[RMDB]
RNA sequence: GGGAACGACUCGAGUAGAGUCGAAAACAAAAAUAGUAAAGUGCAGCUCGGUGAGUACAUUUUCGAGCGCAUUGAUUAUAGUGAUGCUGUAUCCUACAAGUCUAGUACAACGUAUAAACUGACUGUACAAUUUAUGAAAGUUCGCUUUCAUAAAUUGAAAAGAAACAACAACAACAAC
Reactivity to DMS in 0.01 (KOAc 150mM, MgCl2 10mM, bicine 150mM(pH8.5), 24C), signal-to-noise 7, nucleotides 027 to 126: c020a020a060a110a130a060u000a100g010u000a040a080a040g030u000g000c000a100g040c020u000c010g010g000u000g000a110g010u010a090c200a080u010u000u000u000c020g000a020g030c030g000c000a000u000u000g010a160u000u000a030u000a070g010u010g010a200u000g010c060u000g010u000a090u000c020c020u000a030c100a030a080g000u000c010u010a050g020u000a050c110a050a080c210g000u000a070u000a050a090a080c070u000g000a020c020u000g010u000a120
Reactivity to 2A3 in 0.01 (KOAc 150mM, MgCl2 10mM, bicine 150mM(pH8.5), 24C), signal-to-noise 5, nucleotides 027 to 126: c010a000a050a030a020a020u120a030g060u080a080a130a050g010u010g000c020a030g010c080u010c010g000g040u030g040a040g050u140a080c040a190u070u060u030u100c000g000a000g000c000g000c000a000u010u030g020a020u030u120a040u040a100g100u050g050a040u060g020c070u040g020u070a060u010c010c000u020a020c030a130a030g010u010c020u150a010g010u040a040c050a160a020c160g120u160a060u100a170a070a010c020u030g010a000c010u000g000u010a030
The record gives the reactivity of an RNA of 177 nucleotides to DMS and 2A3. Conditions: 150 mM KOAc, 10 mM MgCl2 and 150 mM bicine (pH 8.5), 24 C. Values cover nucleotides 27 to 126. DMS adducts were read by reverse transcription with MarathonRT. Source: RMDB library 15KREP, as collected in RNAgym. 2A3 adducts were read by reverse transcription with SuperScript II with manganese. In probing experiments dimethyl sulfate is read out at A N1 and C N3, which are open when not base-paired.